[RMDB]
RNA sequence: GGGAACGACUCGAGUAGAGUCGAAAAGCGAUACGCAGCGCGAUGCGUCUGGAUCGGCCGAUCCUCGGCCGAGAGGCCGAUGGCCAGCGUACGCGCGAUCGGCCGCGCUCGUACGGAUCAGUACGGCGGCCCAGCAGAUUUUCGAAUCUGCUGGGCCAAAAGAAACAACAACAACAAC
Reactivity to 2A3 in 0.01 (KOAc 150mM, MgCl2 10mM, bicine 150mM(pH8.5), 24C), signal-to-noise 1, nucleotides 027 to 126: g030c010g020a000u060a130c070g000c080a090g020c050g000c030g110a130u040g000c010g100u110c020u010g000g040a050u030c030g010g050c020c020g000a040u070c040c040u110c160g190g000c190c110g000a000g000a010g000g000c000c020g000a010u000g250g000c000c000a020g010c020g000u000a000c040g000c020g000c000g010a010u030c000g010g000c000c000g000c000g020c060u280c040g010u020a020c000g070g100a300u300c040a030g000u000a000c000g050g010c040
Reactivity to DMS in 0.01 (KOAc 150mM, MgCl2 10mM, bicine 150mM(pH8.5), 24C), signal-to-noise 1, nucleotides 027 to 126: g000c030g030a030u000a070c050g030c300a110g000c010g020c040g000a130u000g010c000g000u000c010u020g000g000a050u000c000g010g000c000c000g040a200u010c000c050u000c150g000g020c080c090g020a040g000a250g000g000c000c010g010a030u000g040g020c040c020a000g020c000g010u000a050c020g000c020g000c000g000a030u030c150g000g010c020c030g000c000g010c070u000c030g030u000a000c010g020g010a130u010c170a190g000u000a010c000g030g040c020
Record summary
Structure probing data (2A3 and DMS) for a 177-nucleotide construct. Conditions: 150 mM KOAc, 10 mM MgCl2 and 150 mM bicine (pH 8.5), 24 C. DMS adducts were read by reverse transcription with MarathonRT. Source: RMDB library OK2TRN, as collected in RNAgym.